[RMDB]
RNA sequence: GGGAACGACUCGAGUAGAGUCGAAAAGAUUAAGUGGGAGCGUCGCCCUGUCGGUGCAUCGGAUAUUAAUUAGCCAGUGCGUGGCAAUACGCAUAUUGAUGUCUACUUUGGCGUAGACUAUGCCAAUUUAAGGAUUGGUGGGCAAUCCAGCCCUAGACGACCGUCAUAUAUUCGUAUAUGACGGUCGAAAAGAAACAACAACAACAAC
Reactivity to DMS in 0.01 (KOAc 150mM, MgCl2 10mM, bicine 150mM(pH8.5), 24C), signal-to-noise 2, nucleotides 027 to 156: g010a190u000u000a070a130g040u010g010g000g000a090g030c060g000u010c040g030c070c050c050u020g020u010c070g040g030u000g030c050a080u000c060g000g000a040u000a050u000u020a100a150u000u010a070g010c000c010a030g000u000g020c000g010u000g000g050c200a100a120u000a070c120g000c030a100u010a070u010u010g000a140u010g010u000c010u010a030c010u000u010u000g030g030c110g050u000a030g020a050c050u000a050u010g010c030c020a010a060u000u020u000a070a080g020g000a090u000u020g010g050u010g000g030g010c000a090a110u010c110c080a140g010c010c000c000u000a140g010a240
Reactivity to 2A3 in 0.01 (KOAc 150mM, MgCl2 10mM, bicine 150mM(pH8.5), 24C), signal-to-noise 4, nucleotides 027 to 156: g080a030u150u220a100a040g050u120g010g030g000a040g020c030g020u040c030g060c030c010c030u060g040u040c010g030g020u070g010c010a060u050c060g030g020a000u020a050u090u150a150a100u110u070a030g020c010c020a030g010u000g020c010g000u010g040g030c010a020a050u180a040c010g010c030a010u050a050u090u190g130a110u100g000u000c010u000a020c020u100u160u200g090g000c070g000u000a000g020a000c020u010a010u130g000c030c010a010a010u070u100u100a130a060g100g020a030u010u010g000g010u020g010g000g000c020a030a010u020c030c020a040g000c010c000c000u030a050g020a040
This 207-nucleotide RNA was probed chemically with DMS and 2A3.
Source: RMDB library OK3TST, as collected in RNAgym.
Values are in units of 0.01, from 0 to 300, in steps of 10.
DMS adducts were read by reverse transcription with MarathonRT.
The RNA was probed in 150 mM KOAc, 10 mM MgCl2 and 150 mM bicine (pH 8.5) at 24 C.
For DMS, 3,455 sequencing reads were counted.